The record gives the reactivity of an RNA of 207 nucleotides to DMS and 2A3.
For DMS the reverse transcriptase was MarathonRT.
2A3 adducts were read by reverse transcription with SuperScript II with manganese.

[RMDB]
RNA sequence: GGGAACGACUCGAGUAGAGUCGAAAAGACCGUUCGCGGUCACUUCAGCGUACUACGUUCUUUUGACGAGCAAACAUGGGAGGAAGUCCCAAAUAGGACUUCCGACGAUCAUGGUAGCUCGAUAAGAACGUAUCGCAAGCAUGGCUUUCGAGCCAAACUUGAUAGAUAGAUUCGUCUAUCUAUCAAGAAAAGAAACAACAACAACAAC
Reactivity to DMS in 0.01 (KOAc 150mM, MgCl2 10mM, bicine 150mM(pH8.5), 24C), signal-to-noise 2, nucleotides 027 to 156: g010a050c020c020g000u000u010c210g020c080g020g020u000c010a040c040u000u000c090a210g000c010g000u010a050c100u000a020c000g040u000u010c000u000u000u020u000g030a300c190g010a050g070c010a120a140a290c020a010u000g000g000g000a100g030g020a050a010g010u000c000c000c030a030a090a060u000a030g000g020a020c010u000u000c000c000g010a060c160g010a040u020c020a020u000g000g000u000a300g020c000u000c000g010a080u000a020a030g000a010a010c000g000u000a000u000c040g020c020a110a070g030c060a130u010g000g010c030u000u000u020c190g010a080g020c010c030a020a050a060
Reactivity to 2A3 in 0.01 (KOAc 150mM, MgCl2 10mM, bicine 150mM(pH8.5), 24C), signal-to-noise 7, nucleotides 027 to 156: g000a000c020c000g000u050u080c300g020c040g080g000u020c020a050c050u180u220c100a040g000c010g040u070a160c060u010a010c030g010u010u010c020u040u090u060u100g270a170c030g010a010g000c010a040a300a140c000a010u000g010g000g000a010g000g000a000a000g010u010c010c010c020a100a210a110u300a040g000g000a000c000u000u000c000c000g030a020c010g000a010u010c000a000u000g020g030u080a010g000c000u000c000g010a000u010a000a000g000a000a000c010g000u000a010u040c000g000c000a010a010g060c060a170u100g000g000c010u120u110u170c230g070a000g000c000c000a010a020a060